Conditions: 150 mM KOAc, 10 mM MgCl2 and 150 mM bicine (pH 8.5), 24 C. Structure probing data (2A3 and DMS) for a 177-nucleotide construct.

RNA sequence: GGGAACGACUCGAGUAGAGUCGAAAACAAGAAACGGCACCUCGUCGGUGGUGCCGAAGCGACGUGACCUACCAACAGGAAACGAGCAGUCUGGUAUGACUGCAAACCUAUGGUUAAAAGACUACAAAUGGCAUCAUAUGUUCGCAUAUGAUGCCAUAAAAGAAACAACAACAACAAC
Reactivity to 2A3 in 0.01 (KOAc 150mM, MgCl2 10mM, bicine 150mM(pH8.5), 24C), signal-to-noise 3, nucleotides 027 to 126: c040a030a010g080a060a160a000c020g000g000c000a000c000c020u030c050g240u130c160g070g070u020g000g000u000g000c000c000g000a000a000g030c030g070a090c040g050u030g040a060c000c000u000a030c010c000a030a120c000a090g000g070a090a080a050c080g000a060g000c020a000g000u000c020u110g050g180u300a060u190g000a000c000u000g000c000a000a000a040c030c000u050a090u060g000g010u000u000a010a030a020a020g040a020c040u050a040c180a020a130
Reactivity to DMS in 0.01 (KOAc 150mM, MgCl2 10mM, bicine 150mM(pH8.5), 24C), signal-to-noise 3, nucleotides 027 to 126: c010a170a200g000a080a070a110c010g000g000c020a010c000c010u000c060g000u050c250g040g000u000g000g000u000g000c020c010g010a040a040g000c080g000a150c120g010u030g010a120c020c010u000a040c020c000a050a060c210a080g000g000a160a120a070c120g030a170g030c010a000g020u000c000u000g000g010u080a030u080g000a020c000u000g000c020a030a030a080c040c020u010a050u000g000g010u030u050a040a010a050a040g050a120c060u000a020c230a110a080
The DMS profile rests on 4,078 reads.